[RMDB]
RNA sequence: GGGAACGACUCGAGUAGAGUCGAAAAUGAGCUCAGCCAAGUACCACCCCUCAGUAAGCCUAGAGUAGAGGGGCCUGACAUCCUUUCCUUAAAUUAAACAAGGAGCCUUAUCCAGGUUGUCCUAGUCCGACAAUAAUAUCUUCGGAUAUUAUUGUCGAAAAGAAACAACAACAACAAC
Reactivity to 2A3 in 0.01 (KOAc 150mM, MgCl2 10mM, bicine 150mM(pH8.5), 24C), signal-to-noise 4, nucleotides 027 to 126: u090g010a010g020c010u010c060a020g000c010c030a070a030g030u040a060c010c020a030c010c020c000c010u010c010a050g070u100a080a020g030c010c050u080a050g010a020g100u080a020g020a020g020g000g000g000c010c010u010g010a000c000a050u050c010c010u050u050u040c000c000u080u100a110a170a160u230u160a110a090a040c040a040a000g010g000a010g010c010c010u080u080a070u080c040c020a000g010g000u020u070g040u050c010c000u020a040g070u040c040
Reactivity to DMS in 0.01 (KOAc 150mM, MgCl2 10mM, bicine 150mM(pH8.5), 24C), signal-to-noise 5, nucleotides 027 to 126: u010g010a110g010c040u020c030a060g020c050c060a070a090g010u000a060c090c070a240c030c010c010c020u000c020a140g000u010a090a140g010c050c020u000a090g010a110g020u010a090g010a040g020g020g000g020c080c040u000g000a070c060a070u000c020c020u000u000u000c000c020u000u000a040a080a100u020u020a060a120a080c050a030a040g020g000a050g000c040c030u010u000a080u010c130c100a050g000g010u000u010g010u000c030c020u000a100g000u010c120

The data come from the RNA Mapping Database (RMDB), library RFMREP.
This 177-nucleotide RNA was probed chemically with 2A3 and DMS.
The reactions ran in a buffer of 150 mM KOAc, 10 mM MgCl2 and 150 mM bicine (pH 8.5), at 24 C.
For 2A3 the reverse transcriptase was SuperScript II with manganese.
The DMS profile rests on 4,411 reads.
Values cover nucleotides 27 to 126.
For 2A3, 5,793 sequencing reads were counted.